[RMDB]
RNA sequence: GGGAACGACUCGAGUAGAGUCGAAAAGCUAGCCAGCGCACGAUGAGACUGCCGUGACGUCUAGCCUGCGUCUCAACUAGUCUCCAUCAAUCAAAACGCUGGGAUUGAUGUACGAGAUUAGUACACAGUGUAUGCACGUCUUCGGAUGUGUAUACACAAAAGAAACAACAACAACAAC
Reactivity to 2A3 in 0.01 (KOAc 150mM, MgCl2 10mM, bicine 150mM(pH8.5), 24C), signal-to-noise 9, nucleotides 027 to 126: g030c020u030a010g040c010c030a020g010c020g000c030a020c050g040a040u120g020a030g060a090c060u090g070c060c020g040u030g040a120c010g020u060c030u030a020g010c000c010u040g020c020g050u000c000u000c020a030a030c010u030a000g000u000c000u000c020c010a000u010c000a000a030u030c020a010a050a060a090c100g030c100u120g050g020g010a010u010u030g010a010u010g010u050a040c060g000a000g010a060u020u030a010g020u050a020c080a010c020a040
Reactivity to DMS in 0.01 (KOAc 150mM, MgCl2 10mM, bicine 150mM(pH8.5), 24C), signal-to-noise 9, nucleotides 027 to 126: g010c030u020a090g000c050c020a020g010c020g010c070a070c110g000a060u010g000a080g000a050c050u020g020c140c070g010u000g000a040c030g000u020c030u010a090g010c070c060u010g000c020g000u000c010u000c020a110a070c070u010a000g000u000c000u000c020c040a020u010c000a050a050u020c090a080a070a110a140c090g010c060u020g000g010g000a040u010u010g000a040u000g010u020a050c080g010a080g000a070u000u020a040g010u010a060c100a070c150a120
Source information:
Source: RMDB library OK1LIB, as collected in RNAgym. Structure probing data (2A3 and DMS) for a 177-nucleotide construct. For DMS the reverse transcriptase was MarathonRT. Reactivities are given for positions 27 through 126. The 2A3 profile rests on 125,160 reads.